[RMDB]
RNA sequence: GGGAACGACUCGAGUAGAGUCGAAAAACGGUCGCACCUGAAAUUAUGAUAUGCUGAAUUGGGUGCAAAUGAGGAAACAUUUUUGUGCACUAUGAGCCGUAUCUUCAACAUCUGAUUAUGAUAGCAGAUUACGGACUCGUUUCGACGAGUCCGUAAUAAAAGAAACAACAACAACAAC
Reactivity to 2A3 in 0.01 (KOAc 150mM, MgCl2 10mM, bicine 150mM(pH8.5), 24C), signal-to-noise 2, nucleotides 027 to 126: a000c000g040g080u030c000g000c020a000c010c020u080g060a070a080a000u160u080a120u040g110a020u020a050u210g030c000u020g000a080a060u090u020g080g000g000u010g000c000a000a000a000u120g000a000g100g010a130a130a000c000a070u090u110u100u110u120g030u090g070c010a010c010u000a050u130g000a040g090c000c000g000u070a130u030c020u020u050c000a100a080c000a070u050c020u000g030a120u030u190a190u080g020a100u040a010g030c000a000g030
Reactivity to DMS in 0.01 (KOAc 150mM, MgCl2 10mM, bicine 150mM(pH8.5), 24C), signal-to-noise 2, nucleotides 027 to 126: a040c090g040g030u000c080g050c120a060c020c030u000g000a000a040a170u040u030a120u060g020a100u020a100u030g040c010u010g000a100a080u040u000g020g000g030u020g010c020a010a060a090u000g000a060g000g000a120a140a040c040a070u000u020u000u000u010g020u000g020c160a120c020u000a050u000g000a190g010c000c020g000u020a020u000c000u000u010c030a080a110c180a040u000c020u000g000a100u000u040a100u020g000a050u020a050g070c080a060g000

An RNA of 177 nucleotides, treated with 2A3 and DMS and read out base by base. For DMS the reverse transcriptase was MarathonRT. For DMS, 2,312 sequencing reads were counted. Conditions: 150 mM KOAc, 10 mM MgCl2 and 150 mM bicine (pH 8.5), 24 C. Values cover nucleotides 27 to 126. Source: RMDB library OK1LIB, as collected in RNAgym. 2A3 adducts were read by reverse transcription with SuperScript II with manganese.